This 177-nucleotide RNA was probed chemically with 2A3. Conditions: 150 mM KOAc, 10 mM MgCl2 and 150 mM bicine (pH 8.5), 24 C.

RNA sequence: GGGAACGACUCGAGUAGAGUCGAAAAGAAGAGAAUAACGGUGUAAGUGCAGCCCGUCUUACACCGUAAGGCACAGCGGAAACGCUGAUGUGAAAUACAGGGCUGGGAGACGGAAGUAGACCGUCAAAGGCUGAGUGGAGUUCGCUCCACUCAGCCUAAAAGAAACAACAACAACAAC
Reactivity to 2A3 in 0.01 (KOAc 150mM, MgCl2 10mM, bicine 150mM(pH8.5), 24C), signal-to-noise 1, nucleotides 027 to 126: g070a000a040g180a000g120a250a040u170a080a000c050g000g020u000g000u000a000a000g000u000g140c020a010g000c000c000c000g000u000c000u000u020a000c000a000c000c000g000u030a050a040g080g000c000a000c000a000g000c000g070g000a090a100a000c010g000c000u000g000a070u030g000u000g070a050a000a000u100a040c100a120g000g000g000c000u000g000g070g010a210g000a000c000g000g020a120a130g080u070a070g100a000c000c000g000u000c000a040a040